[RMDB]
Structure probing data (DMS) for a 177-nucleotide construct.
For DMS the reverse transcriptase was MarathonRT.
Source: RMDB library OK2TRN, as collected in RNAgym.
RNA sequence: GGGAACGACUCGAGUAGAGUCGAAAAUGAUCGAGAGAUCUAACGAUGUACGCGAGUCAAACGCACAGACUCGAGCGAAAGCUCGGUCGAAAGACCGCGUACAUCGGUCGGCAAGUGUAUAGUCAAAGAUUAUGGAGCUCUUCGGAGCUCCAUAAUCAAAAGAAACAACAACAACAAC
Reactivity to DMS in 0.01 (KOAc 150mM, MgCl2 10mM, bicine 150mM(pH8.5), 24C), signal-to-noise 1, nucleotides 027 to 126: u020g000a010u000c010g000a280g010a300g000a020u000c000u000a070a100c000g010a020u000g000u000a000c000g010c010g000a110g020u000c010a050a040a110c210g010c130a090c230a260g000a040c020u020c010g000a010g000c000g000a090a070a180g000c010u000c000g020g010u000c000g020a060a070a110g020a010c000c010g010c000g000u000a030c000a000u000c000g010g000u010c050g030g020c090a050a060g000u030g020u000a110u000a120g000u000c060a050a080a100